[RMDB]
RNA sequence: GGGAACGACUCGAGUAGAGUCGAAAAUCAUGUGCCUUCGGGCACAUGAAAACAUCCAGGAUCGCCAAAGGAUGGAAAUAAUGGCGAAGCAAUAAGGAGAAAAAAGACCCGAGUUCGCUCGGGUCAAGACAUUUAGAAGGUUCGCCUUCUAAAUGUCAAAAGAAACAACAACAACAAC
Reactivity to DMS in 0.01 (KOAc 150mM, MgCl2 10mM, bicine 150mM(pH8.5), 24C), signal-to-noise 3, nucleotides 027 to 126: u000c000a020u010g030u000g000c000c000u000u010c170g070g020g040c000a000c010a000u000g000a010a080a100a200c090a050u000c010c020a200g010g010a150u000c030g000c000c010a050a110a130g020g010a040u000g000g010a070a070a100u010a060a120u010g010g010c010g010a030a140g020c100a100a060u020a060a060g010g010a170g000a030a040a080a080a130a130g000a010c000c000c010g000a020g010u000u010c160g020c010u000c000g020g000g000u010c010a000a030
Reactivity to 2A3 in 0.01 (KOAc 150mM, MgCl2 10mM, bicine 150mM(pH8.5), 24C), signal-to-noise 3, nucleotides 027 to 126: u000c000a000u000g000u000g010c020c020u030u050c210g020g020g000c000a000c000a000u000g000a000a000a000a020c010a010u010c010c000a020g100g080a120u020c010g000c020c000a030a050a080g110g010a060u170g050g090a060a050a010u170a040a070u070g000g000c000g000a020a010g040c030a020a080u200a210a080g120g030a080g130a020a190a010a010a010a000g000a000c010c000c000g020a000g010u030u040c110g010c030u000c000g010g000g000u000c010a000a000

About this RNA:
The record gives the reactivity of an RNA of 177 nucleotides to DMS and 2A3. The 2A3 profile rests on 3,749 reads. Source: RMDB library M2PK50, as collected in RNAgym. Conditions: 150 mM KOAc, 10 mM MgCl2 and 150 mM bicine (pH 8.5), 24 C. DMS adducts were read by reverse transcription with MarathonRT.